[RMDB]
RNA sequence: GGGAACGACUCGAGUAGAGUCGAAAAUGAUAUGGAUUGAGUAGGAGGUAUUACGAAUGUGCAGACAUUUCGGAAACGAAAUGUCUGCACACUAUAAUACUACCCACCCUACUCAAUCCUAAGUCUAGUUAAAUAGAGCGUUCGCGCUCUAUUUAACAAAAGAAACAACAACAACAAC
Reactivity to DMS in 0.01 (KOAc 150mM, MgCl2 10mM, bicine 150mM(pH8.5), 24C), signal-to-noise 1, nucleotides 027 to 126: u000g000a030u010a300u010g000g010a020u000u000g000a000g080u000a000g010g020a070g060g020u010a000u000u000a000c160g010a060a070u000g000u000g020c010a070g020a020c000a000u010u010u020c000g020g010a050a110a300c000g020a000a000a000u000g020u000c000u000g020c000a020c000a010c070u000a130u000a000a020u000a010c010u000a080c090c150c180a300c200c000c000u000a010c000u000c000a000a000u000c000c000u050a020a110g000u000c000u000a240
Source: RMDB library TTRINS, as collected in RNAgym. The record gives the reactivity of an RNA of 177 nucleotides to DMS. For DMS, 863 sequencing reads were counted.